[RMDB]
RNA sequence: GGGAACGACUCGAGUAGAGUCGAAAACGCAUGCGAAAGCAUGCGGCUAUGCUAAUGCAUAGUGACCGCCUUUUUGCACACAUCGCGGGCUAUCGCCUUGUUAUUGGUGAUAGCGUUUCCUCAUAGACUUGUUAUUGUCUGUGCAGGUCGUGUGCUACAUGGAUAUUAAUUUCGAUUAAUAUCCAUGAAAAGAAACAACAACAACAAC
Reactivity to DMS in 0.01 (KOAc 150mM, MgCl2 10mM, bicine 150mM(pH8.5), 24C), signal-to-noise 7, nucleotides 027 to 156: c010g020c010a020u000g010c000g020a180a120a260g020c010a010u000g010c010g010g010c000u000a010u000g010c000u000a120a180u000g020c000a020u000a010g020u000g010a200c020c020g020c040c070u000u000u000u000u000g000c010a030c020a040c060a080u000c060g030c070g020g020g020c000u000a010u000c010g020c000c010u000u000g020u000u000a150u010u000g020g040u000g010a030u000a010g010c020g000u010u000u000c010c010u000c030a060u000a060g010a040c030u000u000g030u000u000a110u010u010g010u000c020u000g020u000g010c100a050g020g020u000c120g030u000g020u000g010c010u000a140
Reactivity to 2A3 in 0.01 (KOAc 150mM, MgCl2 10mM, bicine 150mM(pH8.5), 24C), signal-to-noise 9, nucleotides 027 to 156: c000g000c000a000u000g010c010g060a080a010a020g000c000a000u000g000c000g000g000c000u000a000u000g000c030u210a300a080u300g000c000a000u000a000g010u020g080a060c010c000g040c010c010u080u160u030u100u130g000c000a000c000a000c000a020u140c110g010c030g040g050g000c000u000a000u000c000g010c000c020u080u160g170u300u220a260u130u160g000g000u010g000a000u000a000g000c000g010u020u050u010c000c000u000c000a010u020a010g000a000c020u070u110g120u300u280a200u220u190g000u020c010u000g010u000g020c120a010g010g020u060c060g000u010g000u000g000c000u010a010
Source: RMDB library OK3TST, as collected in RNAgym. The record gives the reactivity of an RNA of 207 nucleotides to DMS and 2A3. 2A3 adducts were read by reverse transcription with SuperScript II with manganese.